This 177-nucleotide RNA was probed chemically with DMS and 2A3. 2A3 adducts were read by reverse transcription with SuperScript II with manganese. It was measured as part of the RMDB library RFMREP. For DMS the reverse transcriptase was MarathonRT.
RNA sequence: GGGAACGACUCGAGUAGAGUCGAAAAUGCCUUGUGGUUCCUUAAGACAGCUCAUCGGUGCUGAUGCUUGAGGUUGUGUUUGACGGGCACACAUUGAUCUCUGCAAUUUAAUGCGUGGUGGCUGACACAUCAGUCCUAACUUCGGUUAGGACUGAUGAAAAGAAACAACAACAACAAC
Reactivity to DMS in 0.01 (KOAc 150mM, MgCl2 10mM, bicine 150mM(pH8.5), 24C), signal-to-noise 2, nucleotides 027 to 126: u000g000c010c010u000u030g030u000g020g010u000u010c010c010u000u010a060a060g020a160c030a040g010c040u000c040a090u010c120g010g010u000g010c020u000g010a120u000g010c020u000u000g010a030g030g000u010u000g020u000g010u000u000u000g000a100c080g010g000g010c150a050c050a060c030a100u010u010g010a040u000c050u000c060u010g010c000a050a060u020u010u010a060a050u000g010c040g010u000g010g010u000g010g010c010u000g000a130c130a160
Reactivity to 2A3 in 0.01 (KOAc 150mM, MgCl2 10mM, bicine 150mM(pH8.5), 24C), signal-to-noise 2, nucleotides 027 to 126: u040g030c010c000u020u090g040u060g090g060u020u120c000c000u000u050a020a020g050a050c020a000g010c030u020c110a090u080c080g130g050u070g000c020u000g010a060u070g000c020u020u080g000a010g000g000u040u070g010u010g020u030u000u090g120a030c060g030g080g030c010a010c000a000c000a050u100u150g030a040u030c030u030c000u060g010c040a070a170u090u180u160a160a080u170g030c020g000u020g000g020u010g010g020c010u060g040a010c000a000